[RMDB]
RNA sequence: GGGAACGACUCGAGUAGAGUCGAAAAGUCGAGGUUCGCCUCGACAAAAAGCGUACUACCACGUGGUGUUGUCAGACGAUGUGUCCCAAAUAGGACACGCGUCUUGGAUUUACACGUAACAUCGUGGUAUCGCAAAAAACCAUACUUCGGUAUGGAAGAAGGGAUUCUACUUCGGUAGAAUCCCUUCAAAAGAAACAACAACAACAAC
Reactivity to 2A3 in 0.01 (KOAc 150mM, MgCl2 10mM, bicine 150mM(pH8.5), 24C), signal-to-noise 1, nucleotides 027 to 156: g010u000c000g040a000g000g000u010u190c260g050c070c000u000c000g000a000c000a000a000a160a000a000g000c020g000u050a080c050u000a000c000c000a000c000g000u040g000g070u080g000u030u000g000u000c030a030g000a000c010g060a190u150g040u000g000u000c010c000c000a190a280a160u080a070g020g030a000c060a000c030g000c060g000u040c000u000u080g000g010a000u270u090u000a040c000a000c000g000u030a060a050c060a260u210c000g000u000g000g020u000a000u000c030g000c000a020a030a030a030a030a030c000c000a000u000a000c020u040u080c300g110g000u080a000u080g000g010a000a000